An RNA of 177 nucleotides, treated with DMS and read out base by base. Values are in units of 0.01, from 0 to 300, in steps of 10.
RNA sequence: GGGAACGACUCGAGUAGAGUCGAAAAAAUUGCUAAAUAGUGUUAAGGCUAUCGCAACAAUGAAAAUACCGAUUUUGCGUUGUUGAAAAUAUCUUUCCAAACCAAGAAUCGAUAAUGGCAAUAAAUAUCAAUUGAUCACUUUCGAGUGAUCAAUUGAAAAAGAAACAACAACAACAAC
Reactivity to DMS in 0.01 (KOAc 150mM, MgCl2 10mM, bicine 150mM(pH8.5), 24C), signal-to-noise 1, nucleotides 027 to 126: a110a030u040u000g010c010u010a120a090a070u030a040g040u010g000u000u030a090a120g000g010c020u000a010u000c140g010c050a000a040c030a020a000u000g000a090a020a050a070u010a130c120c070g010a090u000u000u000u000g010c100g000u000u010g000u000u000g000a020a050a030a090u010a010u010c110u000u020u020c060c090a040a030a030c180c090a070a070g000a030a080u000c080g020a030u000a000a070u000g000g020c080a020a040u030a060a060a100u000a080
The RNA was probed in 150 mM KOAc, 10 mM MgCl2 and 150 mM bicine (pH 8.5) at 24 C. It was measured as part of the RMDB library OK2TST. For DMS the reverse transcriptase was MarathonRT.